[RMDB]
Structure probing data (DMS and 2A3) for a 177-nucleotide construct. For DMS, 8,694 sequencing reads were counted. In probing experiments dimethyl sulfate is read out at A N1 and C N3, which are open when not base-paired. DMS adducts were read by reverse transcription with MarathonRT. The data come from the RNA Mapping Database (RMDB), library OK1LIB. Reactivities are given for positions 27 through 126. Conditions: 150 mM KOAc, 10 mM MgCl2 and 150 mM bicine (pH 8.5), 24 C.
RNA sequence: GGGAACGACUCGAGUAGAGUCGAAAACUGCAGUUAAGUCCGCACAAUGACAGCAGCAGAUCAGUCCGUUUAAAUUUUUUAUUUAUCAUAAUGACCUUUUAUUUCUCCUUAUUUGUGCCAUCCUUUCCAUGGUAUAUUAGUUCGCUAAUAUACCAUGAAAAGAAACAACAACAACAAC
Reactivity to DMS in 0.01 (KOAc 150mM, MgCl2 10mM, bicine 150mM(pH8.5), 24C), signal-to-noise 4, nucleotides 027 to 126: c020u010g010c050a080g020u020u010a080a120g000u000c020c060g000c040a050c060a050a050u020g000a050c090a080g010c040a050g000c050a110g000a100u030c080a080g000u010c030c070g000u020u020u010a030a030a040u010u000u030u020u010u010a020u010u010u020a040u030c020a050u020a090a110u030g000a070c050c010u000u000u010u000a060u010u010u000c030u010c010c080u020u020a110u000u000u000g010u010g000c020c150a080u020c060c020u000u000u010c040
Reactivity to 2A3 in 0.01 (KOAc 150mM, MgCl2 10mM, bicine 150mM(pH8.5), 24C), signal-to-noise 9, nucleotides 027 to 126: c020u040g000c010a100g020u120u260a290a010g030u050c030c050g040c010a030c020a050a100u120g010a030c020a040g040c000a000g000c010a000g030a090u090c030a010g070u020c010c030g030u040u070u100a050a070a080u110u090u040u040u080u120a110u060u100u060a090u080c020a030u060a220a090u150g060a090c010c000u060u090u090u110a130u070u130u030c070u090c010c020u110u130a120u110u110u050g030u020g000c010c010a100u080c030c020u020u010u020c010